[RMDB]
RNA sequence: GGGAACGACUCGAGUAGAGUCGAAAAAUGGGGUCUUGCUGUGUUGCCCAGGCUGGUCUCAACCUCCUGGCCUCAGGCCAUCCUCCUGCCUUAGCCCCCUGAGUAACUGUGAUUACAGACAUGCACCACACCCGUCUAUGUUCGCAUAGACGGGUGUAAAAGAAACAACAACAACAAC
Reactivity to DMS in 0.01 (KOAc 150mM, MgCl2 10mM, bicine 150mM(pH8.5), 24C), signal-to-noise 2, nucleotides 027 to 126: a090u010g000g000g000g030u010c040u010u020g020c040u020g020u010g020u000u000g020c100c020c030a080g030g000c130u020g020g000u000c170u020c200a080a090c060c030u000c000c050u000g000g030c050c030u000c050a030g000g000c060c100a090u000c010c010u000c030c020u030g030c020c060u000u010a120g010c020c010c000c010c040u010g010a060g010u000a040a070c030u000g000u000g000a160u010u010a080c030a040g000a060c080a070u000g010c100a090c120c080
Chemical mapping of a 177-nucleotide RNA with DMS.
Conditions: 150 mM KOAc, 10 mM MgCl2 and 150 mM bicine (pH 8.5), 24 C.
Source: RMDB library OK2TRN, as collected in RNAgym.
DMS (dimethyl sulfate) methylates the pairing face of unpaired adenines and cytosines.
For DMS, 2,069 sequencing reads were counted.